[RMDB]
RNA sequence: GGGAACGACUCGAGUAGAGUCGAAAAUUCACUCAGGCAAGCCUGUGUGUCAUAGCAGAGCCAUUAUUGAUUAUCACACAGAUGGGAUUCUGAUAAUAAUAACAACUGGAAUUUUCAUAGCACUUUACAAAAUAUGUUCACUAAGAGCAUCUCAUUAAUUUUACGUGAUAUUCGUAUCACGUAAAAUAAAAGAAACAACAACAACAAC
Reactivity to 2A3 in 0.01 (KOAc 150mM, MgCl2 10mM, bicine 150mM(pH8.5), 24C), signal-to-noise 8, nucleotides 027 to 156: u050u010c010a010c030u060c020a010g030g000c060a050a050g090c010c000u010g010u010g010u010g050u070c070a110u130a070g040c030a020g030a030g100c020c030a050u070u080a050u040u120g100a040u030u100a040u140c020a010c020a020c030a090g100a140u100g020g090g010a060u150u030c020u030g030a020u040a130a030u060a060a020u050a060a030c060a040a040c050u040g040g030a060a070u040u050u070u100c050a060u100a080g030c030a010c030u090u100u130a060c060a020a150a050a030u140a050u080g020u040u050c020a030c120u140a130a020g000a010g020c010a040u020c020u010c050a110u140u230a160
Reactivity to DMS in 0.01 (KOAc 150mM, MgCl2 10mM, bicine 150mM(pH8.5), 24C), signal-to-noise 4, nucleotides 027 to 156: u000u000c010a090c090u010c060a100g020g020c020a130a180g020c050c010u020g030u000g020u000g010u010c110a100u000a180g000c040a090g000a140g040c010c060a260u000u000a040u000u000g010a090u010u000a040u010c010a060c050a070c040a120g010a060u010g010g030g030a080u000u010c040u000g010a050u000a020a040u000a040a050u010a030a050c040a070a080c040u000g030g020a040a050u000u000u000u000c030a180u010a140g010c050a070c030u000u010u000a100c050a040a090a050a080u020a050u010g010u000u010c030a040c050u010a070a110g010a130g030c060a060u000c040u000c020a040u010u010a090